[RMDB]
RNA sequence: GGGAACGACUCGAGUAGAGUCGAAAAACUCAGCCUACAGAUUUGGUACCUGGAUUUCUGUCCAUGGUGAUUUCUGUCACCUUACUACUGAAGAAGAUACCAUUCCAGUGGACCACUGUGACCCAAGCCGCUCGUUAGUUUUCGAACUAACGAGCGGAAAAGAAACAACAACAACAAC
Reactivity to 2A3 in 0.01 (KOAc 150mM, MgCl2 10mM, bicine 150mM(pH8.5), 24C), signal-to-noise 2, nucleotides 027 to 126: a000c050u080c010a030g020c010c020u030a010c040a100g030a110u090u020u030g010g010u000a000c030c030u040g010g020a060u010u050u080c020u040g150u050c030c030a070u120g020g010u000g000a030u200u280u140c080u180g040u000c010a010c000c000u010u160a070c060u050a000c020u030g020a040a030g040a060a000g010a050u030a040c030c020a020u060u060c040c000a060g020u010g090g080a000c000c000a040c070u000g000u030g070a100c000c000c000a010a010g020